RNA sequence: GGGAACGACUCGAGUAGAGUCGAAAAGCAGUUUCACUCACGAUAGACUCUUGAGGAAGAGUGUCAGUAUUGCUUCCUCAAGCAAUACAUAACGGUAUGCCAAUACUGUUAUUGACAGCAGAUUGGCAUCUGCUCUAUCUCAUGAAACUGGUGAGUCAUCGUAUCCCCUAUUCGUAGGGGAUACGAUAAAAGAAACAACAACAACAAC
Reactivity to 2A3 in 0.01 (KOAc 150mM, MgCl2 10mM, bicine 150mM(pH8.5), 24C), signal-to-noise 7, nucleotides 027 to 156: g090c050a020g000u010u000u000c020a030c020u040c000a030c060g060a110u050a100g040a080c030u010c010u050u040g060a030g040g080a030a020g010a010g010u070g070u090c080a030g010u030a020u030u060g000c000u050u050c030c060u120c040a000a000g000c000a010a010u020a040c030a040u200a070a040c050g050g020u180a000u020g030c010c000a010a040u130a280c050u010g030u080u020a180u130u270g090a080c100a030g010c000a000g010a020u030u040g030g020c010a000u000c000u020g000c000u000c000u010a070u020c000u000c020a010u030g020a030a030a030c010u020g000g040u020g020a010g040u060c050
Reactivity to DMS in 0.01 (KOAc 150mM, MgCl2 10mM, bicine 150mM(pH8.5), 24C), signal-to-noise 3, nucleotides 027 to 156: g010c030a030g030u010u000u010c010a100c050u000c010a090c130g010a070u000a050g020a090c080u010c010u000u000g020a250g010g000a040a000g010a080g020u000g040u000c060a160g040u000a030u010u000g010c000u000u020c050c100u000c070a060a050g040c010a020a010u000a040c040a240u010a010a080c030g040g020u000a020u000g010c160c130a080a080u000a060c000u000g010u030u000a300u000u000g030a090c070a040g010c000a060g000a100u000u010g040g020c090a080u000c020u010g010c010u020c010u010a020u000c010u020c060a070u000g000a040a010a060c020u000g000g000u000g010a140g050u000c110
Description: This 207-nucleotide RNA was probed chemically with 2A3 and DMS. Reactivities are given for positions 27 through 156.